[RMDB]
RNA sequence: GGGAACGACUCGAGUAGAGUCGAAAAUAGUAAAUUUGCGGUGACGUUGAGGGCUAAUUUCUGACACUUCGAGAUAUGUUUUGUAGGAUUGUCGUCCUAUUUACGUGUUUAAGCCUGGGGAGAGGUGACAGGGUUAUGACUUCGGUCAUAACCCUGUAAAAGAAACAACAACAACAAC
Reactivity to DMS in 0.01 (KOAc 150mM, MgCl2 10mM, bicine 150mM(pH8.5), 24C), signal-to-noise 2, nucleotides 027 to 126: u040a110g010u050a010a060a110u050u020u010g010c070g000g000u020g000a120c030g020u000u000g020a080g010g030g020c020u020a020a070u010u000u020c040u020g000a110c060a060c100u010u010c030g010a030g030a070u000a040u020g010u030u000u000u010g010u000a100g000g010a040u020u040g010u040c170g000u000c010c000u000a050u000u000u010a020c070g000u010g000u000u000u010a090a090g000c030c000u000g000g000g020g000a050g020a070g010g040u000g000
Reactivity to 2A3 in 0.01 (KOAc 150mM, MgCl2 10mM, bicine 150mM(pH8.5), 24C), signal-to-noise 2, nucleotides 027 to 126: u120a000g110u040a050a060a080u040u000u100g020c000g020g020u030g010a030c020g010u050u150g050a030g030g070g010c010u000a000a180u000u120u090c070u060g000a000c020a020c030u040u050c040g120a090g010a060u170a020u290g110u040u050u090u080g010u000a010g040g000a000u000u160g160u160c100g010u000c010c000u000a060u000u070u020a000c000g010u000g060u070u070u060a000a000g020c000c000u070g060g000g000g000a030g000a020g000g040u070g010
The data come from the RNA Mapping Database (RMDB), library RFM100. An RNA of 177 nucleotides, treated with DMS and 2A3 and read out base by base. The reactions ran in a buffer of 150 mM KOAc, 10 mM MgCl2 and 150 mM bicine (pH 8.5), at 24 C.